[RMDB]
RNA sequence: GGGAACGACUCGAGUAGAGUCGAAAAGCUUCCUCUUGGCGCGGAGGUUUAACUGCGCUCGCUCCCCAUAUCGGUGUGGGCGCCCCGGAUUUACAAAUUAAAGUCCUUUAGGGAGCGGAAAGGGACAAAAACUUGCACGUGUUCGCACGUGCAAGAAGAGAUGCAAGAAGUUCGCUUCUUGCAUCUCAAAAGAAACAACAACAACAAC
Reactivity to 2A3 in 0.01 (KOAc 150mM, MgCl2 10mM, bicine 150mM(pH8.5), 24C), signal-to-noise 2, nucleotides 027 to 156: g070c030u060u020c000c000u000c000u000u030g030g000c000g010c020g010g000a010g000g020u080u180u110a070a010c030u040g010c000g000c000u000c000g000c000u020c000c010c000c020a030u080a100u260c050g050g000u010g010u060g030g040g000c020g000c000c000c000c000g020g000a000u030u120u160a100c080a020a090a040u130u120a100a090a000g010u000c000c000u000u060u120a070g000g000g010a050g010c020g010g000a040a040a050g030g000g010a020c070a040a060a010a040a070c000u010u000g000c000a000c000g000u000g030u060u060c130g010c150a000c000g000u000g000c000a000a000g000a000a000